[RMDB]
RNA sequence: GGGAACGACUCGAGUAGAGUCGAAAAUGUUCAGACAGCCCUGAUUCUGGAUCUGCGCGAGGUUGUGGCUACGCACCUGCUGGUCUUCGUCCAUAAUCGGGUUGUGGUAAGUCACGACUACUUCGUUAACCAGAUUGGCCGGAGACGCGUUGGUCGCCGAACGAGCGUAGUUCGCUACGCUCGUUCGAAAAGAAACAACAACAACAAC
Reactivity to 2A3 in 0.01 (KOAc 150mM, MgCl2 10mM, bicine 150mM(pH8.5), 24C), signal-to-noise 1, nucleotides 027 to 156: u090g000u030u050c030a050g040a080c080a040g120c040c000c000u100g120a170u020u010c010u060g060g000a080u000c020u060g000c010g000c000g030a080g140g000u040u050g010u040g100g100c050u130a060c070g000c000a040c020c000u060g070c150u140g100g010u010c050u110u010c030g040u050c020c000a110u220a160a110u200c010g100g010g000u100u100g000u070g000g030u100a230a030g040u010c060a010c030g000a010c050u000a060c020u020u080c050g120u180u040a070a020c030c000a060g000a190u040u080g030g000c000c010g040g060a040g010a000c010g000c020g070u000u030g000g000u000c020g000c010
The data come from the RNA Mapping Database (RMDB), library OK3TST. The record gives the reactivity of an RNA of 207 nucleotides to 2A3. Values are in units of 0.01, from 0 to 300, in steps of 10. For 2A3 the reverse transcriptase was SuperScript II with manganese. The RNA was probed in 150 mM KOAc, 10 mM MgCl2 and 150 mM bicine (pH 8.5) at 24 C.